[RMDB]
RNA sequence: GGGAACGACUCGAGUAGAGUCGAAAACAAUGUGACGCAUGAUGCUAGCUCUGCCAUUAAUAGACCACAACUCACAUUUGUGAAGAAUUUUAUUACUGCCAAUCCGGCAUGGAGUAAGGCAGUCUUUAUAGCAAAUGGUUCGCCAUUUGCAAAAGAAACAACAACAACAAC
Reactivity to 2A3 in 0.01 (KOAc 150mM, MgCl2 10mM, bicine 150mM(pH8.5), 24C), signal-to-noise 9, nucleotides 027 to 129: c030a010a100u100g020u050g040a010c040g040c090a040u090g030a050u080g080c040u020a020g000c000u000c000u020g030c020c000a030u080u120a050a050u050a050g040a040c010c000a030c030a110a080c010u030c010a030c010a130u060u130u170g040u020g010a060a060g040a090a050u010u090u080u110a130u100u140a030c010u010g000c010c000a020a020u010c010c000g100g040c230a120u280g040g000a030g050u160a100a100g010g000c000a000g000u000c000u040u060u020a120u030a000
Reactivity to DMS in 0.01 (KOAc 150mM, MgCl2 10mM, bicine 150mM(pH8.5), 24C), signal-to-noise 8, nucleotides 027 to 129: c120a070a050u000g020u030g000a060c090g040c110a110u040g020a060u050g010c040u000a000g000c030u000c020u000g040c060c060a020u030u000a040a040u040a000g020a060c030c020a040c130a070a090c100u030c010a060c080a190u020u020u080g000u000g010a020a020g020a010a030u030u010u060u040a090u050u010a120c040u000g000c040c030a060a130u020c020c020g000g000c210a030u100g000g050a040g040u070a100a110g000g020c000a010g030u010c070u000u000u000a070u070a090